Record summary:
An RNA of 177 nucleotides, treated with DMS and read out base by base. Reactivities are rounded to 0.1 and cut off at 0 and 3. It was measured as part of the RMDB library OK2TRN. For DMS, 721 sequencing reads were counted.
[RMDB]
RNA sequence: GGGAACGACUCGAGUAGAGUCGAAAAUCCCAGCACUUUGGGAGGCCUAGGCGAGAGGACCACUUGAAGCCAGGAGUUCAAGACCAGCCUAGGCAACAUAGCGAGACCCCUGUCUCUACAAAAAGAAACACCUCCUAAGUUUCGACUUAGGAGGUGUAAAAGAAACAACAACAACAAC
Reactivity to DMS in 0.01 (KOAc 150mM, MgCl2 10mM, bicine 150mM(pH8.5), 24C), signal-to-noise 1, nucleotides 027 to 126: u000c000c000c000a140g030c150a080c030u010u010u010g010g010g000a150g010g000c000c010u000a000g020g030c010g000a200g000a080g010g000a080c080c180a110c050u000u010g000a030a020g030c160c030a100g000g020a100g010u000u000c020a030a070g000a230c030c030a140g010c000c000u000a000g010g020c040a030a060c040a040u000a080g000c080g000a080g000a080c010c060c040c080u010g010u000c030u000c030u000a090c100a010a070a100a150a020g000a100a160